Notes:
Conditions: 150 mM KOAc, 10 mM MgCl2 and 150 mM bicine (pH 8.5), 24 C. Chemical mapping of a 177-nucleotide RNA with DMS and 2A3. Reactivities are given for positions 27 through 126. For 2A3, 990 sequencing reads were counted.

RNA sequence: GGGAACGACUCGAGUAGAGUCGAAAAAGCAAAAACGUUGGGGAGAAAAAGCGGAACAAUGCGUGGGUUGUGGCGCUGAAACCACAAUUACCAACUGGCAAGGUGGAUGGACCGCGACAGGUGAGCGGAUGCGAAACGGGUUCGCCCGUUUCGCAUCAAAAGAAACAACAACAACAAC
Reactivity to DMS in 0.01 (KOAc 150mM, MgCl2 10mM, bicine 150mM(pH8.5), 24C), signal-to-noise 2, nucleotides 027 to 126: a090g000c090a140a010a050a050a020c160g020u000u020g000g000g000g000a120g000a090a070a140a070a100g030c030g050g000a110a100c090a050a110u010g000c080g000u000g000g000g030u000u010g010u000g000g020c010g040c030u000g000a050a040a180c010c040a030c040a020a060u010u000a120c020c000a130a020c150u040g000g030c020a060a070g030g000u000g000g000a050u060g000g020a140c060c100g000c040g000a050c110a010g000g020u000g000a120g040c100g000
Reactivity to 2A3 in 0.01 (KOAc 150mM, MgCl2 10mM, bicine 150mM(pH8.5), 24C), signal-to-noise 2, nucleotides 027 to 126: a000g130c130a090a060a010a040a070c110g010u120u110g000g030g000g010a060g050a080a130a070a020a000g020c030g010g010a040a000c050a030a090u080g080c050g000u110g030g000g000u000u000g000u020g000g000c060g000c060u040g010a090a000a000c020c000a010c060a030a000u110u070a210c040c000a050a030c090u070g080g000c020a020a080g060g000u020g050g070a090u070g000g040a000c050c040g030c030g020a090c000a020g080g000u050g070a010g040c010g020